[RMDB]
Source information: Structure probing data (DMS and 2A3) for a 177-nucleotide construct. The 2A3 profile rests on 1,522 reads.

RNA sequence: GGGAACGACUCGAGUAGAGUCGAAAAAAGGUCAAAGAGAUACAUACGAUGUGUGUUUUUCGUGCGCAUGUUAUGCAUAUGUACAUCUGUGAGUGCGUGCAUAUAAAUAUGAAUGAUGGAGUCCAUCGCCAUGUGCAUCUUUCGAGAUGCACAUGGCAAAAGAAACAACAACAACAAC
Reactivity to DMS in 0.01 (KOAc 150mM, MgCl2 10mM, bicine 150mM(pH8.5), 24C), signal-to-noise 2, nucleotides 027 to 126: a080a050g000g010u000c030a050a160a060g020a060g030a030u000a030c000a030u000a080c100g010a090u020g010u000g000u000g010u000u010u020u000u000c150g000u040g020c040g030c010a020u010g010u010u000a000u010g020c110a010u000a090u010g020u000a040c050a080u010c150u010g010u010g000a080g010u000g010c040g010u000g000c010a010u000a040u010a080a050a090u000a050u000g000a100a050u010g010a070u000g010g000a110g000u010c010c080a030u000c070
Reactivity to 2A3 in 0.01 (KOAc 150mM, MgCl2 10mM, bicine 150mM(pH8.5), 24C), signal-to-noise 2, nucleotides 027 to 126: a000a000g100g010u020c040a100a020a000g050a010g000a020u020a070c000a020u050a030c040g230a140u120g020u000g000u000g030u030u020u020u060u010c050g030u040g000c030g000c030a010u030g000u080u060a000u030g030c020a000u090a070u180g030u040a000c030a080u100c080u100g220u100g100a030g070u030g000c020g030u010g000c010a000u030a010u000a090a130a020u210a040u070g060a080a020u170g020a000u050g000g030a050g100u060c020c030a020u050c030

For 2A3 the reverse transcriptase was SuperScript II with manganese.
DMS adducts were read by reverse transcription with MarathonRT.
Conditions: 150 mM KOAc, 10 mM MgCl2 and 150 mM bicine (pH 8.5), 24 C.
The data come from the RNA Mapping Database (RMDB), library OK2TRN.